Conditions: 150 mM KOAc, 10 mM MgCl2 and 150 mM bicine (pH 8.5), 24 C. Structure probing data (2A3 and DMS) for a 177-nucleotide construct. The data come from the RNA Mapping Database (RMDB), library M2PK90. For DMS the reverse transcriptase was MarathonRT. The 2A3 profile rests on 2,190 reads. For DMS, 931 sequencing reads were counted.

RNA sequence: GGGAACGACUCGAGUAGAGUCGAAAAAGAAAUAAAGUGUACCAAAUGGUAGGUACACACCAAGUGUGCGUUGGUCGCACACAACCAGCUGUCAAUGGAGACUGCAAAAACAAACCAAAGAAAAAAAGUAUAGGACGUAGUUCGCUACGUCCUAUACAAAAGAAACAACAACAACAAC
Reactivity to 2A3 in 0.01 (KOAc 150mM, MgCl2 10mM, bicine 150mM(pH8.5), 24C), signal-to-noise 2, nucleotides 027 to 126: a020g060a010a030a010u190a090a080a030g000u000g000u010a000c010c000a070a050a190u200g150g050u120a100g010g000u010a010c000a010c010a000c030c020a110a100g010u000g000u000g010c030g020u040u150g230g070u200c010g000c000a010c000a000c000a010a060c010c000a020g010c010u040g020u060c010a110a150u180g190g020a100g000a060c020u030g000c030a060a000a000a060a000c060a040a020a040c000c030a020a110a060g150a020a090a040a010a010a000a010
Reactivity to DMS in 0.01 (KOAc 150mM, MgCl2 10mM, bicine 150mM(pH8.5), 24C), signal-to-noise 1, nucleotides 027 to 126: a100g000a100a070a060u000a040a050a170g000u000g000u000a000c000c000a070a170a090u000g000g020u000a060g000g000u000a010c030a000c000a010c030c150a110a080g000u000g020u000g010c010g030u010u010g020g010u000c020g000c000a030c000a030c050a060a030c210c050a100g010c040u000g000u000c030a070a130u010g010g030a200g000a030c030u010g070c040a040a010a040a050a030c140a010a150a100c030c030a050a140a140g080a040a000a030a140a010a090a120